About this RNA
Chemical mapping of a 207-nucleotide RNA with 2A3. Source: RMDB library OK3TST, as collected in RNAgym. Reactivities are given for positions 27 through 156.
RNA sequence: GGGAACGACUCGAGUAGAGUCGAAAAUUCGGUCCUCUGGAGCGGACCGUUUGCUCCGUCAGGAUGUGGAGGUCUCGCGCCCUCCUAUGCGCGUAUGUACAUCGAUACGGUUAUGUCGCCUUUGUGUCGGCGUUUGACACUUACACAUACCGGAUAAGACUCCGUGAUACUUCGGUAUCACGGAGUCAAAAGAAACAACAACAACAAC
Reactivity to 2A3 in 0.01 (KOAc 150mM, MgCl2 10mM, bicine 150mM(pH8.5), 24C), signal-to-noise 2, nucleotides 027 to 156: u050u000c000g000g000u000c000c000u010c110u150g090g130a130g040c060g010g000a010c000c010g000u000u000u030g010c040u000c020c010g130u090c060a030g000g080a060u000g000u030g000g010a000g000g020u040c000u040c040g050c000g000c000c000c000u000c000c010u010a040u010g040c030g000c000g000u070a000u060g050u010a010c050a160u080c150g100a160u040a150c110g050g020u140u000a000u040g110u120c030g020c010c000u100u130u120g090u050g010u070c010g010g060c040g000u000u000u040g040a040c090a050c240u020u140a170c010a000c000a000u130a270c000c000g010g030a040u020a090a000